Chemical mapping of a 207-nucleotide RNA with 2A3 and DMS.
2A3 adducts were read by reverse transcription with SuperScript II with manganese.
High DMS reactivity at an A or C suggests that its Watson-Crick edge is free.
The reactions ran in a buffer of 150 mM KOAc, 10 mM MgCl2 and 150 mM bicine (pH 8.5), at 24 C.
For DMS the reverse transcriptase was MarathonRT.
RNA sequence: GGGAACGACUCGAGUAGAGUCGAAAAAACGUUGCAUGAUCGUAAAACAUGCCCGGCUUACCGUGAGCCGCCUUUGAAAGAAAGGUUUACACGGACUCUGUUGCGUUACGCACGUACCUAACUUGUGAAAACGGCAUCUUGUUCGCAAGAUGCCGAACUUUUAAUUUAUCUUCGGAUAAAUUAAAAGAAAAGAAACAACAACAACAAC
Reactivity to 2A3 in 0.01 (KOAc 150mM, MgCl2 10mM, bicine 150mM(pH8.5), 24C), signal-to-noise 5, nucleotides 027 to 156: a000a000c000g000u000u000g000c000a000u000g010a060u210c030g070u210a090a080a000a010c000a000u000g000c000c000c000g000g000c000u020u050a100c000c000g010u000g000a000g000c000c000g010c010c010u020u020u020g060a100a050a000g010a010a010a000g010g000u010u040u050a010c000a000c000g050g020a050c050u100c070u150g090u110u040g020c020g030u040u060a080c190g010c020a020c010g020u040a050c010c040u060a110a170c070u140u140g050u060g170a060a080a030a040c010g000g010c000a000u000c000u010u020g020u060u040c140g020c060a000a000g000a010u000g020c000c000g000a000a000
Reactivity to DMS in 0.01 (KOAc 150mM, MgCl2 10mM, bicine 150mM(pH8.5), 24C), signal-to-noise 2, nucleotides 027 to 156: a110a070c020g010u000u020g030c000a040u000g010a050u010c010g010u010a040a040a010a030c010a010u010g000c010c040c020g000g020c020u000u010a100c000c050g030u000g010a080g010c030c020g020c000c000u000u000u000g010a220a130a260g010a040a020a020g010g010u010u000u000a140c040a020c050g000g020a200c180u000c060u000g000u010u000g010c020g000u020u000a100c110g000c040a030c050g000u000a050c050c040u000a090a050c030u000u010g030u000g000a070a050a080a190c030g000g000c010a010u000c000u000u000g000u000u000c290g020c010a010a010g020a030u000g020c000c010g000a000a000
It was measured as part of the RMDB library M2RFOK.